[RMDB]
RNA sequence: GGGAACGACUCGAGUAGAGUCGAAAAGGGGUCUGGCUAGUUGAUAACGAGCGAGGAUCUAUAGCUGAAGCCUCCACGGCUAUAGGGAGCUCGGAAGCAACUUGGACCCAGACGGAGGCACCCAAAACAUUAAAGCAACUUCGGUUGCUUUAAUGAAACAUCAGCUUAUCUUCGGAUAAGCUGAUGUAAAAGAAACAACAACAACAAC
Reactivity to DMS in 0.01 (KOAc 150mM, MgCl2 10mM, bicine 150mM(pH8.5), 24C), signal-to-noise 1, nucleotides 027 to 156: g000g000g000g000u010c010u000g090g080c130u000a130g030u000u000g010a050u020a160a290c020g000a020g000c000g020a160g030g030a060u010c010u000a010u000a000g030c000u010g020a020a070g040c000c030u020c020c000a300c010g000g010c010u010a050u000a030g010g010g000a020g000c000u000c010g010g000a150a160g020c030a000a010c030u010u000g020g040a080c050c020c010a030g000a090c060g010g000a040g040g020c010a050c030c020c010a160a050a140a300c010a020u000u010a010a000a030g000c000a000a010c000u010u000c300g010g050u000u000g000c020u000u000u000a000a010u000g010a160a130
Reactivity to 2A3 in 0.01 (KOAc 150mM, MgCl2 10mM, bicine 150mM(pH8.5), 24C), signal-to-noise 3, nucleotides 027 to 156: g030g000g000g010u040c040u050g100g120c240u190a050g010u010u000g010a020u020a050a040c000g000a010g000c020g030a260g020g030a000u000c000u000a000u020a000g000c000u030g020a140a010g050c000c000u000c000c000a000c010g010g000c010u000a000u000a000g000g010g010a010g000c000u010c000g010g000a060a000g040c000a010a000c020u110u230g020g020a020c010c000c010a010g030a010c090g000g000a000g000g000c000a010c010c000c000a020a090a040a010c010a010u000u010a000a010a000g000c010a000a000c010u070u190c300g150g010u000u000g000c000u000u000u000a000a000u000g000a010a000